[RMDB]
RNA sequence: GGGAACGACUCGAGUAGAGUCGAAAAGAUGACUUCCAGGACUGUUAUGCAACACUAUGCGAGUUAACAUAACGUUGACUCAAGGCAAGUGAAGCAUGGUGUUGCACUUGCCUUUGUCAAUGGAAGAGAUAGUUGACGAGUUCGCUCGUUAGCUAUCAAAAGAAACAACAACAACAAC
Reactivity to DMS in 0.01 (KOAc 150mM, MgCl2 10mM, bicine 150mM(pH8.5), 24C), signal-to-noise 9, nucleotides 027 to 126: g010a130u030g010a140c010u000u010c000c010a050g010g000a050c040u010g010u010u010a060u010g010c020a020a030c020a020c020u000a020u010g000c030g000a080g020u000u000a020a030c010a120u020a100a130c210g000u000u000g010a010c010u000c040a070a060g010g020c110a040a050g010u010g010a080a160g000c010a030u000g000g000u010g000u000u000g000c010a010c040u010u010g000c040c190u020u020u020g000u000c020a070a090u000g000g000a020a010g000a130
Reactivity to 2A3 in 0.01 (KOAc 150mM, MgCl2 10mM, bicine 150mM(pH8.5), 24C), signal-to-noise 9, nucleotides 027 to 126: g100a060u160g020a030c000u000u000c000c000a010g010g030a010c010u030g030u090u070a020u040g000c000a010a000c000a010c010u010a010u030g010c030g020a010g000u000u010a010a010c010a030u150a140a040c130g000u000u000g000a000c000u010c030a010a020g090g000c040a030a050g060u060g170a080a010g010c000a010u020g000g010u020g000u000u010g000c000a000c000u020u070g000c000c000u100u070u110g020u010c010a060a170u020g000g010a000a000g030a010